[RMDB]
RNA sequence: GGGAACGACUCGAGUAGAGUCGAAAAAGCCUGCCAUACGUGGCAGGCAACUUGACAUGAUGAUAUCGAAAACCUUUCUUGAACUCCUGAGAGUGAUUUCUUAUAGACUACAACGGUAUCUGAUUAAUAUCACAGCACUAUUCGUAGUGCUGUGAUAAAAAGAAACAACAACAACAAC
Reactivity to DMS in 0.01 (KOAc 150mM, MgCl2 10mM, bicine 150mM(pH8.5), 24C), signal-to-noise 3, nucleotides 027 to 126: a100g010c000c000u000g030c000c000a050u000a050c160g040u000g000g000c010a000g000g000c010a000a020c040u020u000g010a120c140a040u020g020a110u000g000a020u000a020u000c010g000a190a090a120a150c100c060u000u010u000c060u000u000g000a050a020c050u010c000c070u010g010a110g000a080g000u010g000a070u010u000u000c030u030u030a060u030a040g010a040c130u020a080c200a070a120c010g010g010u000a010u000c000u010g010a140u010u010a030a160
Reactivity to 2A3 in 0.01 (KOAc 150mM, MgCl2 10mM, bicine 150mM(pH8.5), 24C), signal-to-noise 5, nucleotides 027 to 126: a000g000c010c000u010g020c020c000a040u070a100c280g120u030g010g000c000a000g010g000c000a000a000c010u090u130g070a030c020a140u080g010a030u040g010a020u020a000u040c020g020a040a060a150a180c030c000u040u080u070c040u020u090g060a090a080c030u040c040c050u090g050a030g010a020g140u050g050a090u010u100u020c020u090u090a080u080a180g070a060c040u070a050c130a120a000c000g000g000u000a010u000c010u010g020a030u000u110a070a050